Chemical mapping of a 177-nucleotide RNA with DMS and 2A3.
RNA sequence: GGGAACGACUCGAGUAGAGUCGAAAAUUUAGUAGAGAUAGGGUUUCACCAUGUUGGUCAGGGUGAUCUCAAACUCCUGACUUUUCACCCGCCUCGGCUUCCCAAAGUGCUGGGAUUACAGGCAUGACCAAAGUUAUUCAUUCGUGAAUAACUUUGGAAAAGAAACAACAACAACAAC
Reactivity to DMS in 0.01 (KOAc 150mM, MgCl2 10mM, bicine 150mM(pH8.5), 24C), signal-to-noise 5, nucleotides 027 to 126: u000u010u010a070g000u000a080g010a040g010a070u010a120g020g010g000u000u000u000c040a060c070c050a070u000g000u010u000g020g000u000c020a030g010g000g000u000g000a050u000c100u000c120a080a110a080c030u000c010c010u000g000a020c030u000u000u000u000c050a090c030c010c020g000c090c010u000c030g010g000c070u000u000c000c000c010a050a060a100g010u000g010c070u000g000g010g000a100u000u010a060c100a080g000g010c030a040u000g010a210
Reactivity to 2A3 in 0.01 (KOAc 150mM, MgCl2 10mM, bicine 150mM(pH8.5), 24C), signal-to-noise 3, nucleotides 027 to 126: u100u070u070a040g020u060a030g010a030g030a110u150a150g040g000g030u120u120u100c040a010c040c020a030u090g050u080u100g100g070u080c030a030g000g000g030u030g030a060u030c050u000c070a150a210a060c020u020c000c000u000g020a020c000u100u020u010u020c000a010c030c000c010g020c010c010u010c010g030g010c020u020u020c000c000c000a040a050a000g070u070g000c020u040g100g020g060a150u050u120a070c030a070g000g010c020a020u060g020a030

The RNA was probed in 150 mM KOAc, 10 mM MgCl2 and 150 mM bicine (pH 8.5) at 24 C.